[RMDB]
RNA sequence: GGGAACGACUCGAGUAGAGUCGAAAACGGAGGGGCUAGGGUUCCUUGGCAAUGUUCGUCAGCCAAGGGUUAGUCGAUCCUAAGGUCAGUCAUAAGUUGAGCUGGUCGAAAGGGAAGCAGGUUAAUAACGAUGACUGCAAUUCGUUGCAGUCAUCGUAAAAGAAACAACAACAACAAC
Reactivity to 2A3 in 0.01 (KOAc 150mM, MgCl2 10mM, bicine 150mM(pH8.5), 24C), signal-to-noise 2, nucleotides 027 to 126: c110g000g020a010g030g000g050g000c080u060a060g100g030g070u070u300c000c000u000u000g000g000c090a060a130u100g000u140u120c190g060u190c070a130g300c000c000a000a040g030g000g000u000u080a030g040u000c010g000a010u040c000c000u070a110a050g000g000u020c000a000g000u000c000a030u080a300a000g090u080u020g000a040g070c000u000g000g000u020c000g000a130a110a010g050g000g020a010a010g000c080a050g100g000u070u160a110a010u120a160
Reactivity to DMS in 0.01 (KOAc 150mM, MgCl2 10mM, bicine 150mM(pH8.5), 24C), signal-to-noise 2, nucleotides 027 to 126: c100g000g010a080g000g000g010g000c070u000a050g010g020g010u000u030c000c000u000u000g030g010c000a130a040u030g000u020u010c110g020u000c110a160g010c000c000a010a020g000g000g000u010u010a100g040u010c010g000a140u020c000c030u010a100a220g010g010u010c000a040g000u010c030a090u020a110a140g030u020u030g010a150g030c010u000g000g000u000c000g000a060a040a210g010g000g040a060a070g010c060a080g000g000u000u000a110a050u010a130
Structure probing data (2A3 and DMS) for a 177-nucleotide construct. DMS adducts were read by reverse transcription with MarathonRT. The RNA was probed in 150 mM KOAc, 10 mM MgCl2 and 150 mM bicine (pH 8.5) at 24 C. 2A3 adducts were read by reverse transcription with SuperScript II with manganese.